The data come from the RNA Mapping Database (RMDB), library OK1LIB. The record gives the reactivity of an RNA of 177 nucleotides to 2A3.

RNA sequence: GGGAACGACUCGAGUAGAGUCGAAAAGAAAAGAGCGUAAUCGCGUCUUGACGUGAGUGAGACUAGACUGUAGCCUAUCCCAAGUGGGAUAGGAUAACUCACAAUACGCUGAUCUACAGUCAAAAGAGACCGGAGCGGUAUUCGUACCGCUCCGGUCAAAAGAAACAACAACAACAAC
Reactivity to 2A3 in 0.01 (KOAc 150mM, MgCl2 10mM, bicine 150mM(pH8.5), 24C), signal-to-noise 1, nucleotides 027 to 126: g230a020a200a050a000g000a000g000c000g020u000a070a000u060c010g000c020g020u120c110u120u130g110a000c000g000u000g030a010g000u000g000a000g030a000c090u070a030g000a000c000u020g030u000a020g000c000c000u000a030u000c010c000c000a000a200g230u300g060g000g000a000u020a000g000g000a030u000a030a000c000u010c000a000c000a000a000u000a000c000g000c030u030g040a020u000c000u020a000c000a000g000u070c000a000a000a090a000g130a020